[RMDB]
Chemical mapping of a 177-nucleotide RNA with DMS and 2A3. For DMS the reverse transcriptase was MarathonRT. For 2A3 the reverse transcriptase was SuperScript II with manganese. The DMS profile rests on 6,591 reads. It was measured as part of the RMDB library M2PK50.

RNA sequence: GGGAACGACUCGAGUAGAGUCGAAAAGACCGUGGGUUCGCCCACGGUCAAAUCCCACGAUGCGGCGGAUCGAGCCAACAAUCCGACGGUCGGUCCGAACAAAAAGAGCGGUGUUCGCACCGCUCAAGUUAAAUAUCAUCUUCGGAUGAUAUUUAACAAAAGAAACAACAACAACAAC
Reactivity to DMS in 0.01 (KOAc 150mM, MgCl2 10mM, bicine 150mM(pH8.5), 24C), signal-to-noise 6, nucleotides 027 to 126: g000a010c010c000g060u000g000g010g030u000u020c230g010c010c010c010a010c010g010g020u010c000a020a060a100u000c000c000c000a100c210g000a090u010g010c130g020g000c020g010g000a010u000c010g000a070g010c030c030a060a300c060a070a070u010c230c110g000a060c260g010g010u000c000g000g000u000c040c020g000a160a060c050a060a080a060a140a080g000a010g010c010g010g020u010g000u000u010c170g010c010a010c000c000g010c000u000c000a000a030
Reactivity to 2A3 in 0.01 (KOAc 150mM, MgCl2 10mM, bicine 150mM(pH8.5), 24C), signal-to-noise 3, nucleotides 027 to 126: g000a000c010c000g010u010g010g030g000u030u100c180g090c050c000c010a000c000g000g000u000c000a000a000a010u000c000c000c000a010c050g050a070u250g040c160g020g000c000g000g020a010u010c010g010a050g220c020c000a010a020c010a050a140u160c090c080g050a030c050g060g000u010c000g000g000u000c000c010g030a060a030c030a020a080a020a020a010g000a000g000c000g030g000u010g030u060u100c190g020c070a000c000c000g000c000u010c000a000a000